[RMDB]
RNA sequence: GGGAACGACUCGAGUAGAGUCGAAAAGUUUACGCUCCAAGAUCGGUGGAUAGCAGCCCUAUCAAUAUCUAGGAGAACUGUGCUAUGUUUAGAAGAUUAGGUAGUCUCUAAACAGAACAAUUUAGCUCAUACGUUAGGACGUUCGCGUCCUAACGAAUCCCAUUCGUAAGUUCGCUUACGAAUGGGAAAAAGAAACAACAACAACAAC
Reactivity to DMS in 0.01 (KOAc 150mM, MgCl2 10mM, bicine 150mM(pH8.5), 24C), signal-to-noise 2, nucleotides 027 to 156: g010u000u000u000a110c120g000c000u000c020c000a090a120g010a030u000c120g060g050u010g020g020a050u000a050g010c030a240g000c210c110c000u000a120u020c040a070a100u000a060u010c070u000a160g040g020a190g020a060a120c010u000g010u010g020c010u000a130u010g020u000u000u000a010g010a080a130g020a020u000u000a090g030g020u010a110g010u000c020u000c000u000a000a020a000c020a010g000a050a050c040a040a120u000u000u010a040g010c070u000c020a140u000a090c020g000u000u000a010g000g010a030c000g010u000u000c300g050c030g000u000c010c000u000a000a010c000g010a020a080
Reactivity to 2A3 in 0.01 (KOAc 150mM, MgCl2 10mM, bicine 150mM(pH8.5), 24C), signal-to-noise 4, nucleotides 027 to 156: g010u050u030u130a090c090g000c010u030c010c010a020a040g020a030u100c130g120g210u100g130g050a030u030a040g040c100a030g020c030c020c000u030a020u030c020a040a030u030a000u130c000u030a030g000g020a010g030a060a060c110u120g010u030g050c020u030a050u090g020u010u000u000a080g010a260a010g010a040u040u060a090g170g150u160a060g050u030c000u000c010u000a010a000a000c000a020g030a070a010c060a030a060u070u140u140a030g020c010u030c070a070u090a120c020g000u010u000a000g000g000a000c010g000u030u000c170g020c010g080u020c000c000u000a000a000c000g000a000a010
An RNA of 207 nucleotides, treated with DMS and 2A3 and read out base by base. As a SHAPE reagent, 2A3 marks flexible, mostly unpaired nucleotides at the ribose 2'-OH. The 2A3 profile rests on 2,541 reads. For DMS, 3,723 sequencing reads were counted. Conditions: 150 mM KOAc, 10 mM MgCl2 and 150 mM bicine (pH 8.5), 24 C.